[RMDB]
RNA sequence: GGGAACGACUCGAGUAGAGUCGAAAAUGCCUAAUUCAAGGAAUUAGCGUGCCUUCAUGCUAAGGGUUUGAUAUCUGCUAAAACCCGGUGCAUUCAUCAUUGCAGGUUAAGCCAAAGGGAUGUCCCGAAAAGAACGCAAGGUUCGCCUUGCGUUCAAGUUCAUCUAAAUCUUCGGAUUUAGAUGAACAAAAGAAACAACAACAACAAC
Reactivity to 2A3 in 0.01 (KOAc 150mM, MgCl2 10mM, bicine 150mM(pH8.5), 24C), signal-to-noise 8, nucleotides 027 to 156: u110g020c010c010u040a040a040u080u050c120a170a110g110g030a070a070u030u010a040g020c050g050u040g040c020c020u080u130c060a040u070g000c000u040a020a040g010g010g000u000u010u000g040a050u050a070u110c070u080g030c040u070a010a020a020a030c000c010c010g010g010u030g010c000a060u060u160c020a070u050c030a070u040u190g020c020a010g050g010u030u070a050a020g050c050c040a090a050a040g050g000g020a060u110g130u180c010c000c000g020a030a060a010a050g000a000a000c000g000c010a000a000g010g000u020u040c100g080c040c000u000u000g000c000g000u000u000c000a000a000
Reactivity to DMS in 0.01 (KOAc 150mM, MgCl2 10mM, bicine 150mM(pH8.5), 24C), signal-to-noise 3, nucleotides 027 to 156: u010g010c000c020u000a040a090u000u000c060a120a130g020g030a110a050u000u000a020g000c050g000u000g000c020c050u000u030c060a060u000g000c030u010a300a150g010g010g020u000u000u000g010a190u010a060u000c060u010g000c080u000a140a040a030a030c020c000c000g010g080u010g020c010a040u000u000c080a070u010c070a150u010u000g000c020a050g010g020u000u000a020a110g010c010c060a040a070a140g000g020g010a150u000g020u000c010c010c020g010a060a050a070a180g000a030a010c000g000c000a010a030g010g000u000u000c300g030c010c010u000u000g010c000g000u000u000c000a000a080
Description:
Structure probing data (2A3 and DMS) for a 207-nucleotide construct. The DMS profile rests on 9,013 reads. Values cover nucleotides 27 to 156. It was measured as part of the RMDB library M2RFPK. For 2A3 the reverse transcriptase was SuperScript II with manganese. Conditions: 150 mM KOAc, 10 mM MgCl2 and 150 mM bicine (pH 8.5), 24 C.